[RMDB]
RNA sequence: GGGAACGACUCGAGUAGAGUCGAAAAGUUGGUGCCUGCACCCCCACCCACAGGGCCGGGCAGAGCCUCUGAGGUCCUGGCAGGGGCGAUGGUGCUGGGGGACGGGGUGAAGCUCCACGGGGGGUCCACCCCACAACCUUUUCGAAGGUUGUGGGGUAAAAGAAACAACAACAACAAC
Reactivity to DMS in 0.01 (KOAc 150mM, MgCl2 10mM, bicine 150mM(pH8.5), 24C), signal-to-noise 2, nucleotides 027 to 126: g030u000u010g010g010u000g010c050c030u020g040c020a040c020c010c000c000c270a300c030c010c000a040c020a040g010g020g030c030c020g000g000g010c160a080g000a240g020c010c000u010c010u000g010a080g010g010u000c030c020u000g010g010c020a020g020g000g000g020c010g010a130u020g010g030u000g010c000u000g010g000g000g000g000a150c250g000g010g020g020u000g000a130a110g000c010u000c000c000a010c050g000g020g000g010g020g000u000c070c060
Chemical mapping of a 177-nucleotide RNA with DMS. It was measured as part of the RMDB library OK2TRN.